[RMDB]
RNA sequence: GGGAACGACUCGAGUAGAGUCGAAAAGAUAUGGAUCAUGCGGGAGAAUGAGGGUCGGAAACGACCCGAAUUCGAAGAACGCAUGAGUCCUAAGUCAAACAUAUCCCUUCUUCGGAAGGGAUAUGAACACCACAAUGCUGUUCGCAGCAUUGUGGUGAAAAGAAACAACAACAACAAC
Reactivity to DMS in 0.01 (KOAc 150mM, MgCl2 10mM, bicine 150mM(pH8.5), 24C), signal-to-noise 1, nucleotides 027 to 126: g040a020u000a030u010g000g000a090u000c000a000u000g000c020g010g010g010a050g000a030a000u000g000a300g000g000g050u000c000g050g010a000a020a070c000g040a000c010c010c000g000a080a000u000u000c000g050a080a150g000a140a150c000g010c000a020u000g000a050g010u010c000c000u010a000a080g000u000c000a040a110a210c000a000u000a000u000c000c000c000u000u000c020u000u000c130g000g000a020a050g000g030g010a000u000a000u000g000a050a120

An RNA of 177 nucleotides, treated with DMS and read out base by base. The DMS profile rests on 1,144 reads.